[RMDB]
RNA sequence: GGGAACGACUCGAGUAGAGUCGAAAAGCACCUGGGUUCGCCCAGGUGCAAAGAUCAGUAGCAUGCAAGAUCAAAUCCGAUAGGAUGCUACAGGGAUACCAAAAAGCCAGUGCUUCGGCACUGGCAAGACGAUAUCCAUGUUCGCAUGGAUAUCGUCAAAAGAAACAACAACAACAAC
Reactivity to DMS in 0.01 (KOAc 150mM, MgCl2 10mM, bicine 150mM(pH8.5), 24C), signal-to-noise 2, nucleotides 027 to 126: g030c000a000c000c000u010g000g000g030u010u030c220g050c000c000c000a010g000g010u000g000c010a000a020a040g010a050u000c030a050g040u000a010g000c080a000u000g030c040a090a100g000a080u000c080a060a150a300u020c100c100g000a040u000a080g000g020a030u000g000c020u000a030c010a060g000g010g000a030u000a050c040c040a030a040a080a130a080g010c000c000a000g000u000g000c010u010u000c140g010g010c000a000c000u000g000g010c000a000a000
Reactivity to 2A3 in 0.01 (KOAc 150mM, MgCl2 10mM, bicine 150mM(pH8.5), 24C), signal-to-noise 2, nucleotides 027 to 126: g030c000a000c010c000u000g000g040g000u030u080c190g060c040c000c000a000g000g000u010g000c000a000a020a000g030a030u040c030a030g020u020a000g000c020a010u120g060c040a090a100g050a150u010c010a010a140a120u140c080c050g010a030u070a070g140g000a000u000g010c000u020a020c000a010g100g120g000a050u110a140c050c030a060a030a000a030a030g010c000c000a010g000u010g020c000u050u130c270g060g000c000a000c000u000g000g000c000a000a000